[RMDB]
RNA sequence: GGGAACGACUCGAGUAGAGUCGAAAAGAGAUAAUAAUACAACUUACCUCAUAGAGUUGUGAGAAUUAACUGAAUUAGUAUGUGUAAAGCACUUAAGAUAGAGCCAAGCACACAGUAAGCACUAGGAAAGUGUUUUCCAUUAUUAUCUAUGGAAUAGUCAGAGAUGUGGAUUCGUCCACAUCUCUGAAAAAGAAACAACAACAACAAC
Reactivity to DMS in 0.01 (KOAc 150mM, MgCl2 10mM, bicine 150mM(pH8.5), 24C), signal-to-noise 1, nucleotides 027 to 156: g000a090g010a060u010a020a080u000a070a140u010a150c090a050a090c000u010u010a120c070c040u010c070a120u000a160g010a090g000u000u000g000u000g020a050g000a150a150u000u000a080a150c020u000g070a020a300u010u000a090g080u040a060u000g040u000g000u010a000a150a070g000c010a070c000u010u000a080a160g060a210u000a050g010a060g120c020c000a100a290g000c000a000c020a040c000a100g020u010a090a050g020c040a050c080u030a160g000g000a120a030a120g040u000g040u000u020u000u000c020c020a060u000u000a040u000u000a040u000c070u000a080u000g000g000a070a040u000a060g000
Reactivity to 2A3 in 0.01 (KOAc 150mM, MgCl2 10mM, bicine 150mM(pH8.5), 24C), signal-to-noise 2, nucleotides 027 to 156: g060a010g000a010u040a010a020u050a020a000u140a110c010a050a030c020u040u060a040c000c080u130c060a120u110a090g070a000g020u020u100g030u070g030a150g020a020a090u120u050a110a010c090u100g070a070a050u060u050a100g150u070a030u100g020u030g000u040a100a020a000g020c010a000c090u070u060a120a060g050a180u170a150g060a030g030c000c000a050a040g000c000a000c000a000c000a030g020u030a060a000g010c020a000c030u040a030g140g000a100a030a060g030u010g030u040u040u040u000c010c000a000u000u000a010u030u040a040u080c060u050a050u140g000g120a090a060u190a040g080

Structure probing data (DMS and 2A3) for a 207-nucleotide construct. Source: RMDB library OK3TST, as collected in RNAgym. The 2A3 profile rests on 772 reads. For 2A3 the reverse transcriptase was SuperScript II with manganese.